RNA sequence: GGGAACGACUCGAGUAGAGUCGAAAAUCGAUCCGCUGGAAAUCGGCUACGUCGAGGCCCACGGGACCGGAACGUCGUUAGGGGAUAGGAUCGAGGCGCACGCCUUAGGCAUGGUCUUUGGUCGCAACAGCCAAAAUCGGUUCGCCGAUUUUGGCUGAAAAGAAACAACAACAACAAC
Reactivity to 2A3 in 0.01 (KOAc 150mM, MgCl2 10mM, bicine 150mM(pH8.5), 24C), signal-to-noise 2, nucleotides 027 to 126: u040c000g020a020u010c020c030g000c180u130g000g220a080a110a090u150c000g010g000c000u030a030c050g040u020c030g000a000g050g000c000c030c040a030c050g020g010g070a090c000c070g020g030a060a000c020g040u030c030g030u010u090a120g020g020g000g070a040u110a080g020g010a010u020c000g010a020g010g000c060g010c000a040c070g020c000c000u020u070a070g000g080c140a110u130g020g000u020c040u000u050u170g020g000u060c030g020c050a030a100
Reactivity to DMS in 0.01 (KOAc 150mM, MgCl2 10mM, bicine 150mM(pH8.5), 24C), signal-to-noise 2, nucleotides 027 to 126: u020c070g020a060u030c000c150g010c130u030g000g000a110a260a250u000c000g020g000c030u010a100c290g050u000c010g010a190g000g010c120c000c030a120c080g000g000g020a020c080c000g000g000a040a040c060g000u030c000g010u000u070a060g000g000g030g010a030u020a170g000g000a020u000c000g000a040g000g000c030g010c110a120c090g030c000c030u000u020a020g020g050c000a100u000g000g000u000c000u010u000u090g010g000u000c000g050c130a060a110